[RMDB]
RNA sequence: GGGAACGACUCGAGUAGAGUCGAAAAGAUAUGGAUCGGAGAGGGAGACGGUGGUCGGAAACGACCAUGACGUCGAGGAUCUCUCGAUCCUAAGUCAAAGGGUGUGAAAGUUCGCUUUCACACCCAACCUGUUAAGUGUGUUCGCACACUUAACAGGAAAAGAAACAACAACAACAAC
Reactivity to DMS in 0.01 (KOAc 150mM, MgCl2 10mM, bicine 150mM(pH8.5), 24C), signal-to-noise 1, nucleotides 027 to 126: g000a020u000a000u010g000g000a000u000c010g000g000a050g000a010g000g000g000a010g020a010c000g010g020u000g000g020u000c000g000g010a000a010a010c020g020a010c020c000a000u000g020a160c010g050u000c000g000a070g020g000a010u000c000u000c010u000c000g000a020u010c000c000u000a000a050g000u000c010a090a100a140g020g020g000u010g000u000g000a010a000a010g020u010u030c300g000c000u000u000u000c000a020c000a010c000c000c000a010a010
Reactivity to 2A3 in 0.01 (KOAc 150mM, MgCl2 10mM, bicine 150mM(pH8.5), 24C), signal-to-noise 3, nucleotides 027 to 126: g010a000u010a010u040g000g000a000u020c110g250g070a130g000a000g180g010g000a010g000a000c030g050g000u010g000g010u000c000g000g000a000a000a000c000g000a000c000c020a010u100g230a120c010g010u000c000g010a150g000g000a000u000c000u010c000u000c010g000a000u000c000c000u000a000a000g000u010c060a120a100a030g000g000g010u020g000u000g030a010a010a010g030u100u200c290g040c290u010u000u030c010a000c010a000c010c000c000a000a000
Chemical mapping of a 177-nucleotide RNA with DMS and 2A3. The reactions ran in a buffer of 150 mM KOAc, 10 mM MgCl2 and 150 mM bicine (pH 8.5), at 24 C.